[RMDB]
The record gives the reactivity of an RNA of 207 nucleotides to 2A3. Reactivities are rounded to 0.1 and cut off at 0 and 3. The data come from the RNA Mapping Database (RMDB), library OK3TST. The RNA was probed in 150 mM KOAc, 10 mM MgCl2 and 150 mM bicine (pH 8.5) at 24 C.
RNA sequence: GGGAACGACUCGAGUAGAGUCGAAAAUUAACCUCGCUCUCCGUCAUAAACCACAUGGGAGUAGAGCCAUUUUUUUUCACCAAGGUCUCAUUUUUAGACUCCUGAGUGACGAAUCUCAACUGAGUACCAGCGAAGUCACUCGUUUAGACCUCGUAUCCCUAGGUAGUGGGUUCGCCCACUACCUAGGAAAAGAAACAACAACAACAAC
Reactivity to 2A3 in 0.01 (KOAc 150mM, MgCl2 10mM, bicine 150mM(pH8.5), 24C), signal-to-noise 2, nucleotides 027 to 156: u000u000a000a050c010c000u000c000g040c000u000c000u010c000c000g150u090c100a120u280a270a220a080c080c010a170c080a300u140g010g030g000a030g040u050a280g030a040g020c020c010a060u040u040u000u000u020u000u120u230c140a180c050c000a030a000g020g000u000c000u000c040a070u170u270u180u180u130a110g050a070c040u070c040c090u010g000a000g010u020g000a000c000g060a130a090u090c010u030c140a030a230c060u110g020a080g050u030a090c040c030a040g060c010g130a080a010g000u030c000a020c010u070c010g040u040u020u080a000g000a000c010c010u010c040g020u020a190u120c000